[RMDB]
RNA sequence: GGGAACGACUCGAGUAGAGUCGAAAAAUCCCCUAUACGGCGCGGUCGAAGUUCAGGGGACGGCUGAUCGACUGUUUAUCGGCCCUGCUGAUUGGUGUCGAAGCCUCGUCCCGCAGGAUCAGUGGUGAUGGGGCCCUGACUGGAGGGUCAGGGUAAACAUUUAUUAUAGCUUCGGCUAUAAUAAAUGAAAAGAAACAACAACAACAAC
Reactivity to DMS in 0.01 (KOAc 150mM, MgCl2 10mM, bicine 150mM(pH8.5), 24C), signal-to-noise 2, nucleotides 027 to 156: a120u000c020c000c000c070u000a090u010a000c060g010g000c050g020c090g010g030u000c020g010a080a140g010u000u000c080a150g020g020g040g000a030c030g000g000c030u000g010a120u000c030g000a070c020u040g020u000u000u000a100u000c000g030g000c000c050c060u000g040c000u000g010a110u000u000g000g000u010g030u000c000g040a100a120g010c000c000u000c040g020u000c000c000c000g010c070a080g020g010a070u010c090a130g020u010g020g020u000g010a100u010g010g030g000g000c010c010c010u000g000a050c010u000g040g020a210g020g000g010u000c020a010g000g030g010u000a040a060a140
Reactivity to 2A3 in 0.01 (KOAc 150mM, MgCl2 10mM, bicine 150mM(pH8.5), 24C), signal-to-noise 5, nucleotides 027 to 156: a000u050c020c000c000c000u050a050u030a250c060g040g000c020g000c020g020g020u020c030g050a120a030g060u080u140c070a070g020g010g010g070a010c030g000g030c030u050g060a170u030c010g040a020c010u030g070u160u190u070a070u020c010g020g010c040c170c130u150g000c020u010g020a080u040u090g070g060u080g030u020c020g020a030a010g000c000c010u050c040g010u000c000c000c000g000c020a030g030g050a040u070c040a040g020u030g050g070u060g020a030u040g000g000g020g000c010c000c010u000g010a000c010u030g060g100a080g090g050g000u010c000a000g010g000g000u020a020a010a000
Source: RMDB library ARCHII, as collected in RNAgym. An RNA of 207 nucleotides, treated with DMS and 2A3 and read out base by base. Conditions: 150 mM KOAc, 10 mM MgCl2 and 150 mM bicine (pH 8.5), 24 C. As a SHAPE reagent, 2A3 marks flexible, mostly unpaired nucleotides at the ribose 2'-OH. For DMS, 5,574 sequencing reads were counted. For 2A3 the reverse transcriptase was SuperScript II with manganese.